RNA sequence: GGGAACGACUCGAGUAGAGUCGAAAAGAUAUGGAGAUCGAACUACUUUCUGGCCACGGCCGAGUCGGAAACGAUAUCCGUGACAGAAAGCGAUCUCCUAAGUCAAAGGAGCGGUUCGCCGCUCCAACGUUAUAGGUGGGUUCGCCCACCUAUAACGAAAAGAAACAACAACAACAAC
Reactivity to DMS in 0.01 (KOAc 150mM, MgCl2 10mM, bicine 150mM(pH8.5), 24C), signal-to-noise 4, nucleotides 027 to 126: g000a050u000a300u010g010g000a010g010a010u000c000g010a110a060c090u010a300c000u000u010u000c000u000g010g010c200c000a010c000g000g010c300c150g000a110g000u000c020g000g000a090a050a140c000g020a000u000a080u000c010c010g010u000g000a090c000a010g000a000a000a010g000c000g010a010u000c000u000c000c000u000a010a080g000u000c020a070a120a150g000g010a030g010c020g010g000u000u010c220g020c010c020g000c000u000c000c000a010a020
Reactivity to 2A3 in 0.01 (KOAc 150mM, MgCl2 10mM, bicine 150mM(pH8.5), 24C), signal-to-noise 3, nucleotides 027 to 126: g050a040u090a070u210g010g010a000g010a020u010c020g030a080a090c070u140a050c000u300u020u000c010u020g080g030c240c000a010c000g040g000c100c140g060a140g070u010c010g000g050a080a050a060c010g000a010u020a050u020c010c000g000u000g010a010c010a000g010a000a010a000g020c000g000a000u000c000u000c000c010u010a020a020g020u000c030a050a060a230g010g000a000g020c000g020g010u110u150c290g040c100c000g000c000u020c010c000a000a000
This 177-nucleotide RNA was probed chemically with DMS and 2A3.